[RMDB]
RNA sequence: GGGAACGACUCGAGUAGAGUCGAAAACAUGGAUCGUUCGCGAUCCAUGGCAGGUGGUCGUGGGACCAGCCGACCCAGGCUUUUGGCAUCCCAGCCUUUCCAAUCCAGCCUAUUUCGAUAGGCUGAAGUGCCCCAGUAGUUUCGACUACUGGGGCACAAAAGAAACAACAACAACAAC
Reactivity to 2A3 in 0.01 (KOAc 150mM, MgCl2 10mM, bicine 150mM(pH8.5), 24C), signal-to-noise 1, nucleotides 027 to 126: c020a020u010g000g000a000u010c040g000u120u070c210g020c010g100a000u020c070c000a000u020g010g000c070a040g000g130u070g000g070u090c180g180u120g060g040g020a050c000c010a010g050c000c010g040a110c000c120c020a050g000g020c000u170u150u210u230g010g000c040a070u070c000c000c030a000g030c000c010u000u040u010c020c040a060a040u040c020c000a010g000c000c000u010a040u010u110u020c180g070a010u030a010g020g000c000u000g000a020a010

Chemical mapping of a 177-nucleotide RNA with 2A3. The reactions ran in a buffer of 150 mM KOAc, 10 mM MgCl2 and 150 mM bicine (pH 8.5), at 24 C. Source: RMDB library M2PK50, as collected in RNAgym.